[RMDB]
Conditions: 150 mM KOAc, 10 mM MgCl2 and 150 mM bicine (pH 8.5), 24 C. The record gives the reactivity of an RNA of 177 nucleotides to 2A3. As a SHAPE reagent, 2A3 marks flexible, mostly unpaired nucleotides at the ribose 2'-OH.
RNA sequence: GGGAACGACUCGAGUAGAGUCGAAAAGGGGAUCAAGAGUCAGUACUUCAAUCUUCCAUCAGUGAGCUUCUGGCAAGAAUGGACAACGUGUGCAACCUCACCUCCGUUCACACCAUCCGGGAGACCGCCGUGGGACCACGUUCGCGUGGUCCCACGGAAAAGAAACAACAACAACAAC
Reactivity to 2A3 in 0.01 (KOAc 150mM, MgCl2 10mM, bicine 150mM(pH8.5), 24C), signal-to-noise 1, nucleotides 027 to 126: g020g000g000g000a070u060c150a170a000g000a000g150u000c000a060g010u030a040c000u040u000c050a030a130u020c020u110u000c020c000a120u050c000a100g020u020g140a000g070c030u000u000c030u070g000g000c000a000a190g020a110a050u120g070g060a010c000a140a040c060g120u020g010u020g100c020a030a090c000c010u000c000a110c000c000u000c000c010g050u050u070c000a000c000a000c090c000a000u080c000c010g000g000g000a000g110a000c040c030g000
About this RNA: It was measured as part of the RMDB library OK1LIB.